[RMDB]
RNA sequence: GGGAACGACUCGAGUAGAGUCGAAAAGCUGUUCCGCCAUGCUGGGCAUGCUAUUGAGCGCCAAAAUUGCGUAGCCGCAAGCUGUUUGACACGACGAAAAAUGACGAGAACGCCAUGGCGGCACCGGCAGGGGCACUCCUUUCGAGGAGUGCCCCUGAAAAGAAACAACAACAACAAC
Reactivity to DMS in 0.01 (KOAc 150mM, MgCl2 10mM, bicine 150mM(pH8.5), 24C), signal-to-noise 1, nucleotides 027 to 126: g000c010u020g080u000u020c020c000g010c000c020a000u000g020c040u000g000g000g000c000a150u060g020c000u010a070u020u040g000a140g140c040g060c110c130a210a050a070a010u010u000g000c000g020u010a110g000c110c090g050c010a040a060g000c040u050g010u000u000u000g060a230c150a000c050g000a100c190g030a020a000a040a120a080u000g040a220c010g050a220g000a000a120c000g010c000c000a000u000g010g010c040g000g010c130a030c010c000g020g060
Reactivity to 2A3 in 0.01 (KOAc 150mM, MgCl2 10mM, bicine 150mM(pH8.5), 24C), signal-to-noise 3, nucleotides 027 to 126: g040c040u010g030u090u050c010c000g000c010c000a080u140g020c060u160g040g000g030c030a030u160g000c040u050a150u060u170g080a050g000c040g010c040c030a030a000a120a110u080u040g000c000g040u090a070g060c120c140g020c080a040a000g000c050u130g050u100u030u080g030a030c030a000c190g230a000c050g110a140a070a030a070a130u150g090a010c020g050a040g050a130a030c010g030c040c000a010u040g030g000c010g000g000c030a020c030c000g020g020